[RMDB]
RNA sequence: GGGAACGACUCGAGUAGAGUCGAAAACAGUAUGCCUUCGGGCAUACUGAAACCAGAGGGUAUCUGGCCCACGCUCCCAUGCGUGCCGGGAAACCCAUCCCAAAACGGAUGUCUUCGGACAUCCGAAGAAUUGGUGAAGCUUCGGCUUCACCAAUUCAAAAGAAACAACAACAACAAC
Reactivity to 2A3 in 0.01 (KOAc 150mM, MgCl2 10mM, bicine 150mM(pH8.5), 24C), signal-to-noise 1, nucleotides 027 to 126: c000a000g010u020a000u020g000c010c000u060u070c210g100g000g040c010a000u000a010c000u010g000a060a010a010c070c000a030g100a070g100g000g030u050a050u060c000u000g010g020c040c110c000a000c000g020c000u220c020c100c030a030u260g010c000g010u020g000c020c000g080g000g000a060a100a040c000c000c000a090u020c030c010c040a010a050a010a030c020g000g000a000u010g010u000c010u030u090c140g010g000a010c010a020u000c000c000g000a010a030
Reactivity to DMS in 0.01 (KOAc 150mM, MgCl2 10mM, bicine 150mM(pH8.5), 24C), signal-to-noise 1, nucleotides 027 to 126: c010a020g010u000a010u000g010c000c000u000u020c210g000g010g040c010a010u000a000c010u010g020a030a040a140c140c110a100g000a110g010g000g000u000a060u000c010u000g000g000c210c150c200a010c010g010c010u010c210c230c150a080u030g000c000g040u000g000c060c020g020g000g000a030a040a040c000c000c000a160u000c000c010c010a040a040a170a150c000g000g000a030u000g020u000c010u000u010c290g020g010a010c000a000u010c000c010g000a030a010
This 177-nucleotide RNA was probed chemically with 2A3 and DMS. For 2A3, 1,896 sequencing reads were counted. 2A3 adducts were read by reverse transcription with SuperScript II with manganese. High 2A3 reactivity points to a flexible backbone, as in loops and unpaired stretches.